[RMDB]
RNA sequence: GGGAACGACUCGAGUAGAGUCGAAAACAUCAGGGAUUCGAUGGCCUGGGCUGUCCUGUCACUGUUGCAGUUCAUUCUGGUUCAGGUUCUGGUCAGAACAAAUGACGGUGGUCGUAAAGCCGUCCGGAUCCGAGAGCUACUUCGGUAGCUCUCGGAUAAAAGAAACAACAACAACAAC
Reactivity to DMS in 0.01 (KOAc 150mM, MgCl2 10mM, bicine 150mM(pH8.5), 24C), signal-to-noise 1, nucleotides 027 to 126: c060a000u000c070a030g030g000g030a060u000u000c090g010a030u000g010g000c010c030u000g020g000g010c020u000g010u020c040c060u020g020u000c030a150c090u000g000u000u030g010c020a030g030u000u020c140a260u000u000c050u000g000g000u000u000c010a050g010g020u000u000c040u000g010g020u010c140a020g000a070a010c100a040a100a050u000g020a020c010g000g020u010g000g010u000c100g020u000a050a120a220g020c030c000g000u000c020c180g020g000